[RMDB]
RNA sequence: GGGAACGACUCGAGUAGAGUCGAAAAGUUGCAGCAUAUUGGGCACGGAAGAGUAGGGCACCAAAAAGGAACGAACACUACCAUCUGCUUCCUUAAUGCUGACAUCGAGAUCAGAGCCGCUGCCCGACGCCGUGGAUAUAUUCGUAUAUCCACGGCGAAAAGAAACAACAACAACAAC
Reactivity to 2A3 in 0.01 (KOAc 150mM, MgCl2 10mM, bicine 150mM(pH8.5), 24C), signal-to-noise 1, nucleotides 027 to 126: g080u060u110g040c010a000g000c030a000u080a170u160u140g040g040g000c050a010c060g010g040a060a030g050a100g040u040a020g030g010g000c030a080c030c000a060a100a120a070a000g060g010a100a020c070g010a050a010c040a020c060u050a040c030c000a030u060c010u060g030c040u060u000c030c000u100u130a060a010u060g010c010u010g020a040c020a070u110c080g040a020g020a050u070c010a010g010a000g070c020c010g020c060u040g010c000c000c000g000a010
Reactivity to DMS in 0.01 (KOAc 150mM, MgCl2 10mM, bicine 150mM(pH8.5), 24C), signal-to-noise 1, nucleotides 027 to 126: g010u010u000g000c000a030g010c120a050u010a140u000u030g030g000g070c260a120c070g000g000a080a070g010a090g040u000a060g010g010g000c100a100c020c060a010a030a150a140a070g020g000a060a060c050g010a040a030c120a030c100u010a070c070c060a220u000c010u030g000c180u010u030c050c000u030u000a030a140u000g000c030u000g030a060c050a050u000c030g000a120g000a050u000c030a070g000a050g010c040c000g000c180u000g010c020c000c020g010a160